[RMDB]
RNA sequence: GGGAACGACUCGAGUAGAGUCGAAAAAGGGGUAUCCCAAUAUCACUCUCUAGGGGUGACUCAGAGCAGGGGAAGGAGUUACCCCUAAAAAGUAUGUUAGAAUGAUUUUAUCGCAUCAUAUCCUUUUUAUCCAUGGUUUUUUCGAAAACCAUGGAUAAAAAGAAACAACAACAACAAC
Reactivity to 2A3 in 0.01 (KOAc 150mM, MgCl2 10mM, bicine 150mM(pH8.5), 24C), signal-to-noise 1, nucleotides 027 to 126: a030g100g010g000g020u090a080u080c000c000c000a020a010u100a040u040c040a070c010u110c010u010c070u040a020g000g010g010g010u020g000a000c000u010c000a070g010a040g090c060a040g050g010g030g050a000a110g080g000a020g000u000u000a000c000c000c050c020u000a010a010a010a010a010g080u070a100u130g060u040u060a040g080a110a030u070g060a060u110u000u030u190a100u120c100g000c040a000u050c020a020u030a050u050c010c000u000u000u000u000

This 177-nucleotide RNA was probed chemically with 2A3.
The reactions ran in a buffer of 150 mM KOAc, 10 mM MgCl2 and 150 mM bicine (pH 8.5), at 24 C.
Values cover nucleotides 27 to 126.
Source: RMDB library RFM100, as collected in RNAgym.
Values are in units of 0.01, from 0 to 300, in steps of 10.
2A3 adducts were read by reverse transcription with SuperScript II with manganese.